[RMDB]
RNA sequence: GGGAACGACUCGAGUAGAGUCGAAAAAGAAACUUAAGGUAUUUCAGUCUGUUGUAUAUUACUUGCGAAAAGCAGGCUUAUCAAAUACAGGUGAGUUUCAACGCAUCUUGAAUUUGGCAGCAUUUACGCACUUCAUUUAUUUCGAUAAAUGAAGUGCAAAAGAAACAACAACAACAAC
Reactivity to DMS in 0.01 (KOAc 150mM, MgCl2 10mM, bicine 150mM(pH8.5), 24C), signal-to-noise 4, nucleotides 027 to 126: a120g010a050a010a020c010u000u010a070a140g010g000u000a020u000u000u000c120a030g010u000c020u000g000u000u000g010u000a090u000a090u010u010a070c150u010u000g000c140g000a050a080a130a040g010c020a010g000g000c010u000u000a060u000c100a030a020a020u000a020c020a050g000g030u000g020a020g000u000u000u010c050a070a130c150g010c080a040u000c040u010u000g010a080a120u000u000u000g000g010c060a050g020c060a080u010u000u000a090c200
Reactivity to 2A3 in 0.01 (KOAc 150mM, MgCl2 10mM, bicine 150mM(pH8.5), 24C), signal-to-noise 3, nucleotides 027 to 126: a000g010a010a010a000c030u060u060a050a020g070g020u030a050u040u070u080c020a020g010u010c030u020g050u110u050g110u080a040u020a050u200u180a110c080u020u120g110c090g100a250a030a000a000g000c010a000g020g000c000u130u060a160u170c080a020a020a000u010a010c000a010g200g070u080g060a020g020u000u010u040c020a020a000c040g010c030a040u050c070u090u170g100a170a100u150u070u090g060g000c050a040g020c020a080u070u130u150a070c100
Conditions: 150 mM KOAc, 10 mM MgCl2 and 150 mM bicine (pH 8.5), 24 C. Chemical mapping of a 177-nucleotide RNA with DMS and 2A3. Reactivities are given for positions 27 through 126. It was measured as part of the RMDB library OK2TST. DMS adducts were read by reverse transcription with MarathonRT. 2A3 adducts were read by reverse transcription with SuperScript II with manganese.